[RMDB]
RNA sequence: GGGAACGACUCGAGUAGAGUCGAAAAACCUUUGUGUUAUCGGGAGCGAAUAUGUGCUAUGCUCAAACCCAUUGGGUUUGAGACCCAUACCCUAUUCGCAUCGAUCGAUAACACUCUGGUAAACCAUCUGAGUGAGUUUCGACUCACUCAGAUGGAACAGUUGGCCUAGCUUCGGCUAGGCCAACUGAAAAGAAACAACAACAACAAC
Reactivity to 2A3 in 0.01 (KOAc 150mM, MgCl2 10mM, bicine 150mM(pH8.5), 24C), signal-to-noise 1, nucleotides 027 to 156: a000c010c000u010u010u050g000u000g010u000u000a020u000c020g000g000g040a030g000c000g000a010a000u010a030u090g130u070g120c130u020a000u030g030c000u010c000a010a000a000c030c000c120a290u190u300g010g010g020u000u000u000g020a000g000a030c030c020c000a010u020a020c000c010c000u020a000u000u020c000g020c100a140u100c030g040a150u080c000g000a000u000a000a000c000a000c000u010c000u010g000g000u030a150a000a090c000c000a000u000c000u000g000a000g010u010g010a020g020u040u040u180c220g170a050c000u010c000a000c000u000c000a000g000a000u000g000g000a030a020
This 207-nucleotide RNA was probed chemically with 2A3. The RNA was probed in 150 mM KOAc, 10 mM MgCl2 and 150 mM bicine (pH 8.5) at 24 C. Values cover nucleotides 27 to 156. 2A3 adducts were read by reverse transcription with SuperScript II with manganese.